About this RNA: An RNA of 177 nucleotides, treated with 2A3 and DMS and read out base by base. For DMS the reverse transcriptase was MarathonRT. For 2A3, 722 sequencing reads were counted. 2A3 adducts were read by reverse transcription with SuperScript II with manganese.
[RMDB]
RNA sequence: GGGAACGACUCGAGUAGAGUCGAAAACAAUGAGGAUUCGUCGUACAAGAGGCUUUCUUGUAUGACGCCCAGAGGAGCUACUCCACCUGAAUGGUGAGUCGCUGCAUCUGCAGCGUCGGCAUGAAUGAUCUUCGGUAGCGUUCGCGCUACCGAAGAUAAAAGAAACAACAACAACAAC
Reactivity to 2A3 in 0.01 (KOAc 150mM, MgCl2 10mM, bicine 150mM(pH8.5), 24C), signal-to-noise 2, nucleotides 027 to 126: c120a010a030u240g080a010g190g090a030u110u070c000g000u000c000g020u000a000c020a080a030g070a050g140g130c050u210u300u000c000u030u010g000u060a120u020g000a000c000g000c000c000c000a010g020a010g000g010a020g000c000u070a010c000u010c100c020a010c050c000u250g220a280a130u280g000g000u000g030a000g020u000c000g000c010u010g000c120a210u020c020u100g000c040a030g000c020g030u030c000g120g020c040a020u030g100a130a000u060g000
Reactivity to DMS in 0.01 (KOAc 150mM, MgCl2 10mM, bicine 150mM(pH8.5), 24C), signal-to-noise 1, nucleotides 027 to 126: c030a070a060u050g000a120g000g010a060u050u050c020g000u000c000g020u000a060c000a030a060g050a000g050g000c090u000u120u000c000u000u000g000u000a000u010g000a010c050g000c270c120c000a070g000a150g000g000a070g000c020u050a050c020u020c020c080a040c000c000u000g080a100a110u040g010g000u000g000a010g000u000c010g000c000u000g000c030a300u080c080u060g020c070a180g000c000g020u000c050g000g000c040a140u020g000a090a120u050g000